[RMDB]
RNA sequence: GGGAACGACUCGAGUAGAGUCGAAAACUUAGAUUUGAUAGAGGCGGCGUUCGGCAAUAUCACAUCUGUGCACCUACCUACAGGAACGAGGUUUAAAUUUGGUGCCAUGAUGAAAUCCGGUAUGUUCGAUUAUAGACUCAUUCGUGAGUCUAUAAUCAAAAGAAACAACAACAACAAC
Reactivity to 2A3 in 0.01 (KOAc 150mM, MgCl2 10mM, bicine 150mM(pH8.5), 24C), signal-to-noise 8, nucleotides 027 to 126: c020u080u080a030g050a170u200u070u230g090a110u100a100g080a060g090g050c030g010g030c060g040u050u030c020g050g020c030a040a030u030a010u120c020a020c010a060u000c010u010g100u140g010c010a010c000c000u000a010c000c000u090a180c030a100g130g120a180a060c110g020a020g020g000u030u070u140a050a100a100u180u140u120g010g000u000g020c010c000a050u100g000a010u020g020a040a020a030u050c040c010g050g020u110a070u150g130u080u090c020
Reactivity to DMS in 0.01 (KOAc 150mM, MgCl2 10mM, bicine 150mM(pH8.5), 24C), signal-to-noise 8, nucleotides 027 to 126: c050u010u010a090g010a160u010u010u010g020a110u000a080g000a250g010g010c040g020g010c070g020u000u000c030g010g000c080a060a090u010a060u000c080a210c020a020u000c010u000g010u010g010c020a010c000c000u000a040c010c010u000a080c100a140g020g010a080a110c220g010a030g000g010u000u000u010a030a020a150u000u010u000g010g020u000g000c000c020a020u000g000a030u000g000a060a080a100u000c070c050g010g030u000a050u000g010u000u000c120